[RMDB]
RNA sequence: GGGAACGACUCGAGUAGAGUCGAAAACGCAUCCGCGACUACAUCAAGACCAUCGGCCUUUACCGCAACAAGGCCAAGAAUGUCAUGGCGCUUUCGGAAAAGCUGCUGCGGGAUUUCGAUGGCGAAGAUCGACGCCUGGUUUCGACCAGGCGUCGAUAAAAGAAACAACAACAACAAC
Reactivity to 2A3 in 0.01 (KOAc 150mM, MgCl2 10mM, bicine 150mM(pH8.5), 24C), signal-to-noise 1, nucleotides 027 to 126: c070g000c000a000u020c090c030g000c000g160a170c000u240a000c000a010u270c000a090a170g150a090c030c030a100u090c000g000g000c000c000u220u100u030a020c000c000g120c000a030a070c000a000a020g050g000c000c000a000a010g120a030a000u130g010u300c000a000u000g010g000c080g000c130u060u080u230c080g210g050a000a000a030a120g000c020u030g080c000u080g000c050g000g000g070a000u000u120u000c000g050a000u190g000g000c000g000a070a050g000